[RMDB]
RNA sequence: GGGAACGACUCGAGUAGAGUCGAAAACAGGAGGGCGGAGAGGCCAUGUCACUCUAAAGCCAGAGCAAUGCCCCCCGGCUAGUCAUGUAGUGUGCGUGCGUUGUUAGUGUGAUUGGCGCGUGUUAGACCUAGACCCCUAUUUCGAUAGGGGUCUAGGAAAAGAAACAACAACAACAAC
Reactivity to DMS in 0.01 (KOAc 150mM, MgCl2 10mM, bicine 150mM(pH8.5), 24C), signal-to-noise 2, nucleotides 027 to 126: c090a130g030g020a080g000g020g030c050g010g000a160g030a110g010g010c050c070a040u010g020u010c050a070c000u000c090u000a030a130a120g000c070c060a080g000a070g000c070a060a050u000g010c030c010c040c020c040c020g010g000c020u000a040g010u010c230a050u000g020u000a080g020u010g000u020g020c070g040u010g000c030g020u010u000g020u020u000a050g020u000g020u010g000a060u000u000g010g000c030g000c110g010u010g020u000u020a070g010a210
The record gives the reactivity of an RNA of 177 nucleotides to DMS. The DMS profile rests on 1,569 reads. The RNA was probed in 150 mM KOAc, 10 mM MgCl2 and 150 mM bicine (pH 8.5) at 24 C. It was measured as part of the RMDB library OK2TST.